[RMDB]
RNA sequence: GGGAACGACUCGAGUAGAGUCGAAAAAUGACCCUAUUUAUAAGAAUGGUGCCAUGUAUAAAGGCAAACCAAUUCUUUGGGUCAAUAAAGCAUCUUAUGAUACUAAUCUUAAUAAGUUCAAUAGAGCGACGCUGUACCUUCGGGUACAGCAAAAGAAACAACAACAACAAC
Reactivity to DMS in 0.01 (KOAc 150mM, MgCl2 10mM, bicine 150mM(pH8.5), 24C), signal-to-noise 3, nucleotides 027 to 129: a170u000g000a050c010c030c010u040a000u010u000u000a150u070a040a020g020a030a020u010g010g090u020g020c000c000a080u050g060u060a140u000a060a110a100g010g020c040a000a120a090c110c000a030a170u020u020c010u000u020u060g040g060g050u040c030a050a030u060a010a000a000g030c020a020u000c000u080u020a010u030g010a000u020a040c050u010a000a000u060c240u070u020a080a140u020a060a040g000u010u010c080a040a230u000a040g000a050g030c020g050a060c150
Reactivity to 2A3 in 0.01 (KOAc 150mM, MgCl2 10mM, bicine 150mM(pH8.5), 24C), signal-to-noise 5, nucleotides 027 to 129: a000u040g000a000c000c000c010u030a140u050u200u030a160u090a010a000g000a020a000u010g000g000u010g000c000c020a030u060g130u170a100u140a170a110a070g000g010c000a090a010a000c000c000a040a150u000u000c000u000u010u000g000g000g000u000c010a000a000u060a010a050a020g010c020a170u010c000u000u110a050u030g010a000u030a130c020u060a060a080u060c040u090u110a130a100u110a250a000g030u020u030c020a000a070u010a010g010a000g000c020g040a040c040
An RNA of 170 nucleotides, treated with DMS and 2A3 and read out base by base. Conditions: 150 mM KOAc, 10 mM MgCl2 and 150 mM bicine (pH 8.5), 24 C. The DMS profile rests on 7,909 reads. The data come from the RNA Mapping Database (RMDB), library 15KLIB.